[RMDB]
RNA sequence: GGGAACGACUCGAGUAGAGUCGAAAAUUCGGCUAUGCUUCAGGCAGAACUUACUCAAAUGAACCAAAACAGUUUGCAAUUUCAGCAGCAAACAGACGGUCGUUUGGAGCAACUGAAUAGUCAAAAAUGCCUAGUCAGUAUUCGUACUGACUAGGCAAAAAGAAACAACAACAACAAC
Reactivity to DMS in 0.01 (KOAc 150mM, MgCl2 10mM, bicine 150mM(pH8.5), 24C), signal-to-noise 1, nucleotides 027 to 126: u010u000c010g030g000c000u000a050u010g000c210u000u010c070a000g030g000c070a110g000a200a110c170u000u000a130c030u000c000a010a020a160u000g000a130a050c010c040a090a000a150a190c150a070g000u000u000u000g000c000a210a080u000u000u000c290a110g040c200a300g000c000a000a000a000c010a110g000a080c300g010g000u000c010g000u000u000u000g010g030a010g040c110a000a050c010u000g000a000a130u000a010g000u030c040a020a130a050a150a250
Structure probing data (DMS) for a 177-nucleotide construct. The reactions ran in a buffer of 150 mM KOAc, 10 mM MgCl2 and 150 mM bicine (pH 8.5), at 24 C. For DMS, 498 sequencing reads were counted. It was measured as part of the RMDB library OK2TST.